[RMDB]
RNA sequence: GGGAACGACUCGAGUAGAGUCGAAAAUUGUCGUUGCUUUAAAAAGUCAACGGCAACUAAGCAUGCUUCAAGAAUUAGCUUUUUUCUGUUCAGAUCUCGAAAACAUUCAGCGGCUCAGUGAUUGUCGUAUCUUUCGAAGCUUCGGCUUCGAAAGAUAAAAAGAAACAACAACAACAAC
Reactivity to 2A3 in 0.01 (KOAc 150mM, MgCl2 10mM, bicine 150mM(pH8.5), 24C), signal-to-noise 2, nucleotides 027 to 126: u000u000g000u000c010g010u000u000g070c070u110u150u180a110a150a100a000a000g160u150c030a000a010c000g000g000c000a000a000c030u030a010a000g000c040a060u090g000c000u160u040c090a110a060g020a160a170u080u070a080g000c000u150u010u000u000u000u020c050u010g030u010u040c010a010g020a170u010c020u000c040g110a050a040a090a010c070a080u000u050c020a040g040c000g000g000c010u030c110a060g020u050g140a090u090u060g010u010c000g010
Reactivity to DMS in 0.01 (KOAc 150mM, MgCl2 10mM, bicine 150mM(pH8.5), 24C), signal-to-noise 2, nucleotides 027 to 126: u000u000g060u000c010g000u000u010g000c000u020u010u050a040a150a080a020a060g000u030c000a000a000c090g000g000c010a000a000c170u020a040a080g000c040a080u000g030c110u000u020c170a010a140g000a050a100u000u000a060g030c020u000u010u000u010u030u000c020u000g010u000u000c030a090g030a050u010c000u020c030g000a110a040a110a120c120a170u090u020c080a050g030c060g000g000c000u030c050a030g010u000g000a010u030u000g020u020c030g050